This 207-nucleotide RNA was probed chemically with DMS and 2A3. The reactions ran in a buffer of 150 mM KOAc, 10 mM MgCl2 and 150 mM bicine (pH 8.5), at 24 C. The data come from the RNA Mapping Database (RMDB), library VIROID. For DMS, 3,255 sequencing reads were counted. 2A3 adducts were read by reverse transcription with SuperScript II with manganese.
RNA sequence: GGGAACGACUCGAGUAGAGUCGAAAAGUUGGUUCCGAGGGGGGUGUGAUCCAGGUACCGCCGUAGAAACUGAGUUACGACGUCUACCCGGGAUUCAAACCCGGUCCCCUCCAGAAGUGAAUUCUGGAUGAAGAGUCGCGCUAAGCGCACUGAUGAGGUUAACUUAUUGGUUCGCCAAUAAGUUAACAAAAGAAACAACAACAACAAC
Reactivity to DMS in 0.01 (KOAc 150mM, MgCl2 10mM, bicine 150mM(pH8.5), 24C), signal-to-noise 2, nucleotides 027 to 156: g000u000u020g010g010u000u000c020c020g030a130g010g020g030g030g030g060u030g000u000g000a080u000c070c080a030g000g020u010a000c120c020g030c030c060g020u010a080g000a140a090a300c160u070g010a180g010u000u000a160c030g040a000c000g000u000c030u000a010c000c000c000g020g040g010a140u000u010c110a060a140a150c010c010c020g030g020u010c010c000c030c060u000c000c000a000g020a020a070g020u000g020a220a300u010u000c000u030g010g010a050u010g010a090a170g020a130g000u000c090g000c020g030c040u020a070a140g030c040g050c020a040c030u010g000a140u010g010a190g020
Reactivity to 2A3 in 0.01 (KOAc 150mM, MgCl2 10mM, bicine 150mM(pH8.5), 24C), signal-to-noise 2, nucleotides 027 to 156: g040u040u030g030g010u080u000c060c070g060a140g010g020g020g000g000g000u060g050u030g030a070u060c020c010a010g000g070u010a010c000c010g010c010c010g040u020a010g130a120a090a000c090u180g020a040g110u090u090a040c030g030a010c020g120u000c010u020a000c000c030c000g050g020g000a060u240u150c070a120a080a090c000c020c000g000g010u020c010c000c030c000u070c000c000a000g000a010a010g080u160g190a160a230u000u010c010u000g000g010a010u050g010a050a040g090a030g090u090c080g000c000g000c090u280a240a060g010c010g050c020a020c030u080g040a140u130g050a040g170